[RMDB]
RNA sequence: GGGAACGACUCGAGUAGAGUCGAAAAACACGAGGAGGCCCGUCUGUUCACCAUCCUCGCCGAGCUUGUCAAGUGAUGAUUCUGAUUCAGACAGGAGCCCCGGCAAACCCCGGGCGCGCUCCAGAGCAAUGGGAUAAUGAUUCGUCAUUAUCCCAUUAAAAGAAACAACAACAACAAC
Reactivity to DMS in 0.01 (KOAc 150mM, MgCl2 10mM, bicine 150mM(pH8.5), 24C), signal-to-noise 5, nucleotides 027 to 126: a110c040a080c070g000a120g020g000a130g000g010c020c020c030g010u040c020u000g010u010u000c030a100c060c020a090u020c030c050u030c030g000c050c060g000a120g010c080u010u030g010u040c070a090a110g030u010g000a060u010g000a110u000u030c050u010g000a080u040u000c040a070g010a110c050a160g000g010a080g000c040c010c010c020g000g000c110a050a120a130c240c300c020c000g000g000g000c200g010c160g010c000u010c010c010a070g010a090g000c160
Reactivity to 2A3 in 0.01 (KOAc 150mM, MgCl2 10mM, bicine 150mM(pH8.5), 24C), signal-to-noise 4, nucleotides 027 to 126: a000c070a020c040g030a060g050g020a030g040g020c010c010c010g060u030c020u030g080u080u070c010a020c070c020a070u030c010c020u050c010g000c010c010g060a050g040c050u150u120g030u110c060a120a070g050u030g110a080u050g020a050u130u020c040u060g040a120u060u130c020a000g020a080c030a050g010g010a000g010c000c010c000c000g010g000c090a240a200a300c000c030c000c000g010g020g010c080g010c040g000c010u020c000c010a020g000a000g050c030
An RNA of 177 nucleotides, treated with DMS and 2A3 and read out base by base. For 2A3 the reverse transcriptase was SuperScript II with manganese. The 2A3 profile rests on 3,393 reads.